[RMDB]
RNA sequence: GGGAACGACUCGAGUAGAGUCGAAAACUUCCUCGGGCUGGACGCGUCCGACGACGAGGCCGACGAGGCCGAGAGCAGCGCCGAGGGAAACGGCGACGGCUCGCCCGAGAGCGCGCCCGCCUAAAGGCUAAAACGUAGCGUUCGCGCUACGUUUUAGAAAAGAAACAACAACAACAAC
Reactivity to DMS in 0.01 (KOAc 150mM, MgCl2 10mM, bicine 150mM(pH8.5), 24C), signal-to-noise 2, nucleotides 027 to 126: c160u000u030c010c000u010c040g010g000g000c010u010g030g010a130c050g000c040g020u000c010c030g050a280c260g010a060c040g000a280g010g010c000c010g010a130c210g000a300g010g010c000c010g010a120g020a110g020c050a020g000c010g010c000c000g000a060g000g010g000a020a070a090c130g000g010c000g000a170c030g030g000c010u000c000g000c050c020c020g020a120g000a090g020c000g010c090g020c010c020c080g000c010c010u010a100a090a170g000g010
Reactivity to 2A3 in 0.01 (KOAc 150mM, MgCl2 10mM, bicine 150mM(pH8.5), 24C), signal-to-noise 2, nucleotides 027 to 126: c030u040u000c010c000u020c000g040g000g000c040u090g040g080a080c030g030c010g140u030c060c090g050a040c070g020a000c030g030a070g030g000c030c000g020a130c150g040a090g000g000c000c040g010a030g000a010g030c000a000g000c130g160c010c010g000a050g000g050g020a030a190a000c040g030g050c000g010a070c020g110g000c000u000c000g030c000c050c030g300a170g000a040g070c000g000c000g030c010c000c010g020c010c000u140a190a100a020g160g000
An RNA of 177 nucleotides, treated with DMS and 2A3 and read out base by base. It was measured as part of the RMDB library OK2TRN.